[RMDB]
RNA sequence: GGGAACGACUCGAGUAGAGUCGAAAAGAAAGCGUCAUUCGCCGAAAGAGAAGAUAAUGACGCAUUAGGUUACGUGGGCAACCUAAUCAGCGCACGACAAGAAAUCUCAUUCGCAGAAAUAAGAAAACCGUGCCAUUACUUUCGAGUAAUGGCACGGAAAAGAAACAACAACAACAAC
Reactivity to 2A3 in 0.01 (KOAc 150mM, MgCl2 10mM, bicine 150mM(pH8.5), 24C), signal-to-noise 1, nucleotides 027 to 126: g050a000a080a000g000c000g000u000c000a020u020u060c030g070c010c040g170a000a100a100g150a050g040a180a000g010a010u090a000a020u000g020a030c000g040c000a030u090u020a000g000g050u030u000a030c160g020u000g000g050g000c000a000a000c000c000u020a000a120u010c030a000g000c000g060c030a000c000g010a000c050a000a110g200a040a090a020u010c010u000c010a030u190u130c030g000c010a000g170a100a010a000u160a300a020g040a060a000a000a000
The record gives the reactivity of an RNA of 177 nucleotides to 2A3. The RNA was probed in 150 mM KOAc, 10 mM MgCl2 and 150 mM bicine (pH 8.5) at 24 C.